[RMDB]
RNA sequence: GGGAACGACUCGAGUAGAGUCGAAAAUCCUAAGUCACGAUGGGAGUGACUUCUUUGGUAGGAGGGUUCGGAAACGAACCUACCCACCCUACGAAGUCACUUUGAUCAUCGUGAUAUGGAAAACAGGUUAUCUCCUGCUUCGGCAGGAGAUAACCUGGCAUUGUAAUACGUUCGCGUAUUACAAUGCAAAAGAAACAACAACAACAAC
Reactivity to DMS in 0.01 (KOAc 150mM, MgCl2 10mM, bicine 150mM(pH8.5), 24C), signal-to-noise 3, nucleotides 027 to 156: u000c000c010u020a100a200g020u000c000a000c000g000a040u000g030g000g000a060g000u000g000a010c000u000u000c010u000u000u000g010g040u000a000g030g060a300g020g000g000u000u000c000g010g000a190a160a300c010g010a020a010c000c000u000a030c010c010c000a030c000c000c010u000a020c100g020a030a030g000u000c000a000c010u000u000u000g000a150u000c000a020u000c010g040u020g040a020u010a060u000g000g000a060a080a080a300c010a000g010g000u000u000a000u000c010u000c000c010u000g020c000u000u000c290g080g010c000a010g000g010a000g000a000u000a000a000c000c010u000g000
Reactivity to 2A3 in 0.01 (KOAc 150mM, MgCl2 10mM, bicine 150mM(pH8.5), 24C), signal-to-noise 4, nucleotides 027 to 156: u020c000c000u020a100a020g010u000c000a000c000g000a000u000g000g000g050a000g010u000g000a000c010u000u000c000u020u020u030g040g000u020a130g000g020a060g010g010g010u010u000c010g020g000a040a050a050c010g000a000a010c000c000u070a070c010c000c000a010c010c010c000u060a070c170g000a000a000g000u000c000a010c020u050u030u060g170a170u100c000a000u000c000g000u000g000a000u000a050u030g080g050a010a060a020a070c000a000g000g010u000u000a000u000c000u000c000c000u000g020c000u050u060c170g110g000c000a000g000g000a000g000a000u000a000a000c000c000u000g000
Description:
An RNA of 207 nucleotides, treated with DMS and 2A3 and read out base by base. DMS adducts were read by reverse transcription with MarathonRT. The DMS profile rests on 4,094 reads. Source: RMDB library RNAMAK, as collected in RNAgym.